An RNA of 177 nucleotides, treated with 2A3 and DMS and read out base by base. For 2A3 the reverse transcriptase was SuperScript II with manganese. Reactivities are given for positions 27 through 126. The RNA was probed in 150 mM KOAc, 10 mM MgCl2 and 150 mM bicine (pH 8.5) at 24 C. Values are in units of 0.01, from 0 to 300, in steps of 10.
RNA sequence: GGGAACGACUCGAGUAGAGUCGAAAAUUGCUUAUGGGAAGAAUGCGUCCCUUAUAUGCAAAUUAUCCAUCUGCUUCACUUUGUCAGCUCUGUUUUCUUAUAUUUUGCUGAUCAUUUUAGGAUGGAAAUAGAUCUCUCGAUUCGUCGAGAGAUCUAUAAAAGAAACAACAACAACAAC
Reactivity to 2A3 in 0.01 (KOAc 150mM, MgCl2 10mM, bicine 150mM(pH8.5), 24C), signal-to-noise 7, nucleotides 027 to 126: u040u010g000c000u050u050a030u120g000g040g000a040a010g080a220a130u300g100c160g090u000c020c000c000u030u080a140u040a040u050g010c000a000a040a070u150u070a060u060c010c000a000u020c020u050g060c050u130u190c030a020c040u080u090u040g010u010c000a000g000c000u000c010u070g170u080u110u120u030c090u170u130a160u040a120u220u100u090u070g000c000u020g020a050u060c020a050u020u070u050u130a040g010g000a010u000g000g000a000a000
Reactivity to DMS in 0.01 (KOAc 150mM, MgCl2 10mM, bicine 150mM(pH8.5), 24C), signal-to-noise 3, nucleotides 027 to 126: u000u000g000c010u020u000a030u000g010g000g000a010a050g020a210a130u030g010c150g020u000c000c010c000u010u040a040u020a040u030g030c010a020a020a060u050u010a090u010c020c000a010u000c000u000g000c300u030u020c080a070c080u010u010u000g010u000c000a020g010c010u010c120u020g010u000u000u010u000c100u000u020a060u020a070u010u010u010u000g010c010u000g010a010u010c070a040u000u000u000u000a110g000g000a000u000g010g000a030a110